[RMDB]
RNA sequence: GGGAACGACUCGAGUAGAGUCGAAAACAGCGGCCGACAGGAGUAAUUCCCGCCGAAACAGGGUUUUCACCCUACCUUUCUUCGGGUGUCCUUCCUCGCGCCCGCAGGACCACCCCUCGCCCCCUUUGCGCUGUCGCUUCGGCUACUACCCGGUGGACAAUCCAUACAUGUUCGCAUGUAUGGAUUGAAAAGAAACAACAACAACAAC
Reactivity to 2A3 in 0.01 (KOAc 150mM, MgCl2 10mM, bicine 150mM(pH8.5), 24C), signal-to-noise 2, nucleotides 027 to 156: c030a020g000c000g020g020c010c010g030a030c150a150g010g020a000g030u080a030a020u090u040c010c000c000g000c000c020g050a020a000a060c300a080g010g040g020u080u140u270u300c130a070c000c000c000u060a080c010c030u000u050u020c010u030u070c020g000g000g000u020g000u000c000c000u020u060c000c000u030c000g010c020g030c120c030c000g000c000a010g020g120a030c030c020a020c000c020c000c000u030c000g050c020c000c000c000c040u010u020u030g020c030g000c030u020g000u030c020g000c050u020u010c040g010g010c000u060a110c010u020a030c040c020c000g020g010u010g020g000a000
Reactivity to DMS in 0.01 (KOAc 150mM, MgCl2 10mM, bicine 150mM(pH8.5), 24C), signal-to-noise 2, nucleotides 027 to 156: c050a170g020c030g020g000c040c030g020a080c050a060g000g000a070g030u010a070a100u000u110c020c000c000g020c040c030g000a050a060a060c070a060g030g010g040u010u000u000u000c120a120c020c000c010u000a060c140c040u000u000u000c030u000u000c030g000g010g030u010g020u000c020c010u000u000c030c020u000c050g000c060g030c030c010c000g090c070a060g010g000a110c070c030a140c040c010c000c010u010c060g010c030c010c010c010c020u000u000u000g010c000g050c060u000g100u000c030g010c050u010u000c040g040g030c020u000a110c040u000a100c010c020c010g000g030u020g000g020a300